[RMDB]
RNA sequence: GGGAACGACUCGAGUAGAGUCGAAAAGAAGCGAAACAUCAUCGAAGGAAAGCUGCAAAAAGCGAGAAGUUGGAUCAAGCUAACCUUGCUUUCUUGGUCCGCCAUUCCUUGCCAACUGUGAACCAGCCACUCAGGAUAGUUUCGACUAUCCUGAGUGAAAAGAAACAACAACAACAAC
Reactivity to 2A3 in 0.01 (KOAc 150mM, MgCl2 10mM, bicine 150mM(pH8.5), 24C), signal-to-noise 9, nucleotides 027 to 126: g080a030a010g060c050g050a100a060a070c020a050u130c010a020u060c060g060a040a010g020g040a080a060a010g020c010u040g000c060a040a020a030a040a010g030c050g020a030g010a120a030g020u160u190g020g010a040u070c040a050a010g060c050u030a020a030c020c070u070u120g020c010u030u010u030c000u010u040g010g010u000c000c000g020c020c010a100u060u040c010c000u020u040g030c010c020a040a030c080u050g010u030g070a030a040c010c000a010g020c010
Reactivity to DMS in 0.01 (KOAc 150mM, MgCl2 10mM, bicine 150mM(pH8.5), 24C), signal-to-noise 6, nucleotides 027 to 126: g000a110a070g010c030g010a090a080a080c110a070u010c070a050u010c110g000a080a070g000g000a070a130a160g010c010u010g000c130a040a060a050a090a040g010c010g010a040g000a050a070g000u000u030g010g000a060u010c070a040a070g010c160u010a030a060c080c080u020u020g010c060u000u000u000c040u010u000g000g000u020c040c030g010c050c070a110u010u010c030c010u000u000g000c010c020a060a090c060u000g010u020g000a100a120c080c030a070g010c160